[RMDB]
RNA sequence: GGGAACGACUCGAGUAGAGUCGAAAAAUAUCCACUGAUAGAGAUCUUCAUUCUGGCUCAGGGAGAGCAGAAGUCAUUAGCAUGCCUGACAUAUUACCACAUCUGAUUACAAGCUUGUUCAAGAGCAAUUCUUAGCACCUAUAACCCUUACUCAAAACCGAGUGUAAAUGUUCGCAUUUACACUCGGAAAAGAAACAACAACAACAAC
Reactivity to 2A3 in 0.01 (KOAc 150mM, MgCl2 10mM, bicine 150mM(pH8.5), 24C), signal-to-noise 1, nucleotides 027 to 156: a000u140a060u010c020c010a070c070u070g030a110u080a140g010a000g020a060u030c000u140u120c060a070u010u020c000u050g100g000c010u000c010a020g010g010g060a070g000a000g030c040a000g050a070a010g020u070c020a040u070u070a030g030c080a020u000g010c000c000u030g030a000c010a020u120a050u050u160a030c000c000a010c020a070u020c120u010g020a070u110u130a060c000a030a000g020c070u000u050g040u040u250c010a040a020g000a000g030c030a100a140u060u010c010u010u030a010g020c010a020c020c000u070a050u080a170a090c070c000c000u020u150a070c050u110c050a000a110a060a120
The data come from the RNA Mapping Database (RMDB), library OK3TST. Chemical mapping of a 207-nucleotide RNA with 2A3. For 2A3 the reverse transcriptase was SuperScript II with manganese. Reactivities are given for positions 27 through 156. 2A3 is a SHAPE reagent: it acylates the 2'-hydroxyl of flexible nucleotides of all four kinds.